The record gives the reactivity of an RNA of 177 nucleotides to 2A3 and DMS.
[RMDB]
RNA sequence: GGGAACGACUCGAGUAGAGUCGAAAAUAUGUUUUGGUCUGUGCGACUCGGGGGAGACGCGCGGAGGGGGAGUGUAGUAAACAAAAAGUAACCAGAGAAGCGAGUGGUCUCCCGGCACCGGGGGUCCCUAGACAAUACCAUUCGUGGUAUUGUCUAGAAAAGAAACAACAACAACAAC
Reactivity to 2A3 in 0.01 (KOAc 150mM, MgCl2 10mM, bicine 150mM(pH8.5), 24C), signal-to-noise 2, nucleotides 027 to 126: u230a070u070g100u020u060u050u130g000g030u000c010u030g080u050g040c040g020a030c000u000c060g000g010g000g050g020a040g010a010c020g010c010g000c030g020g000a030g020g000g000g000g000a050g000u060g020u060a040g000u050a020a130a030c040a030a090a020a030a000g060u060a010a030c040c050a040g030a000g010a190a030g090c030g020a020g040u080g020g020u030c000u000c040c010c000g030g080c090a090c170c000g020g010g000g000g000u030c020c000
Reactivity to DMS in 0.01 (KOAc 150mM, MgCl2 10mM, bicine 150mM(pH8.5), 24C), signal-to-noise 5, nucleotides 027 to 126: u010a080u010g020u000u000u000u000g010g010u000c030u000g020u010g020c040g010a110c030u010c050g010g010g010g010g010a070g010a080c040g020c040g020c060g000g000a120g010g020g010g010g010a100g020u010g010u000a090g000u020a070a080a070c080a030a050a090a100a090g010u010a080a110c060c030a090g000a090g010a120a120g010c050g000a050g020u010g000g010u000c040u000c010c000c010g010g000c150a060c120c030g010g000g000g010g000u000c020c040

For 2A3, 2,691 sequencing reads were counted. For DMS the reverse transcriptase was MarathonRT. Reactivities are given for positions 27 through 126. It was measured as part of the RMDB library OK2TST.